[RMDB]
RNA sequence: GGGAACGACUCGAGUAGAGUCGAAAAGAACUCGUAAAUCCACUGUUGCAACUUCCUAUAGUUGCCAAUGACGAAACCUACGGGGAUUACGCUCUCGCUGCGUAAGCAGCCUUAGCCCUUCCCCCCUGGUACCUUCGGGUCCAGCAAUCAUCAGGGGCAUGGUGUUGAUGUUCGCAUCAACACCAUGAAAAGAAACAACAACAACAAC
Reactivity to 2A3 in 0.01 (KOAc 150mM, MgCl2 10mM, bicine 150mM(pH8.5), 24C), signal-to-noise 1, nucleotides 027 to 156: g050a060a020c030u010c090g030u030a000a040a140u050c040c050a120c140u090g040u110u040g000c000a000a020c010u080u070c100c090u260a120u160a250g000u000u000g010c020c040a020a070u140g050a020c080g040a060a070a030c000c030u040a030c080g000g000g000g000a020u020u070a020c020g010c010u020c020u040c060g000c010u010g000c000g050u110a110a100g000c010a010g020c000c010u050u060a020g010c010c000c000u020u020c010c000c000c000c020c010u000g000g050u110a020c010c020u050u090c230g040g000g000u000c010c000a010g000c040a080a070u090c010a030u040c040a050g000g000g000g020
Reactivity to DMS in 0.01 (KOAc 150mM, MgCl2 10mM, bicine 150mM(pH8.5), 24C), signal-to-noise 1, nucleotides 027 to 156: g000a060a100c060u030c020g030u010a070a110a220u000c060c020a160c030u020g010u020u020g000c020a030a060c030u000u000c110c110u030a150u030a030g020u070u000g000c030c060a020a040u010g030a100c070g000a100a030a100c070c040u000a070c100g010g060g000g010a060u010u000a030c130g000c020u010c020u010c090g000c020u020g040c010g000u020a090a200g060c000a010g000c000c020u000u010a060g000c000c070c140u000u000c010c000c000c000c040c040u000g020g030u010a050c020c020u000u000c210g020g040g020u000c050c190a030g000c040a070a060u010c080a060u000c040a080g050g020g040g040
The data come from the RNA Mapping Database (RMDB), library ARCHII. The record gives the reactivity of an RNA of 207 nucleotides to 2A3 and DMS. The 2A3 profile rests on 1,739 reads. For 2A3 the reverse transcriptase was SuperScript II with manganese. DMS adducts were read by reverse transcription with MarathonRT.